[RMDB]
Chemical mapping of a 177-nucleotide RNA with 2A3 and DMS. Values are in units of 0.01, from 0 to 300, in steps of 10. Reactivities are given for positions 27 through 126. As a SHAPE reagent, 2A3 marks flexible, mostly unpaired nucleotides at the ribose 2'-OH. The reactions ran in a buffer of 150 mM KOAc, 10 mM MgCl2 and 150 mM bicine (pH 8.5), at 24 C.
RNA sequence: GGGAACGACUCGAGUAGAGUCGAAAAUAAACACUUCUGAGUUGCUCACAUGCUCAGAAGAACAAGGUUCGGAAAAUUAGUGAUCAUUUGAUGUGCUGAACUCCAAAGAGUCAAAACUGAGUUGGUGCUAUCCCUAUGAGUUCGCUCAUAGGGAUAGAAAAGAAACAACAACAACAAC
Reactivity to 2A3 in 0.01 (KOAc 150mM, MgCl2 10mM, bicine 150mM(pH8.5), 24C), signal-to-noise 1, nucleotides 027 to 126: u030a000a050a000c010a010c030u000u000c010u020g000a000g000u010u040g110c050u040c090a130c020a060u120g000c000u000c010a000g000a000a010g000a000a000c010a020a040g110g000u060u070c040g090g100a010a070a090a280u040u030a040g030u010g050a020u030c060a120u020u100u300g020a020u020g050u050g030c010u010g020a010a010c000u000c010c020a040a050a010g040a000g000u010c000a030a050a000a050c020u070g050a010g070u040u060g090g040u060g050
Reactivity to DMS in 0.01 (KOAc 150mM, MgCl2 10mM, bicine 150mM(pH8.5), 24C), signal-to-noise 3, nucleotides 027 to 126: u010a140a160a200c260a070c010u000u010c000u000g000a010g040u010u000g010c100u010c160a070c160a070u010g000c000u010c000a000g010a030a010g020a150a090c160a110a150g010g010u000u010c040g010g010a030a030a080a090u000u010a010g030u000g000a030u010c030a150u000u020u020g010a040u000g020u010g050c060u000g000a020a040c020u000c010c030a030a130a120g000a040g000u000c040a080a050a090a190c060u000g030a090g000u010u000g000g020u000g000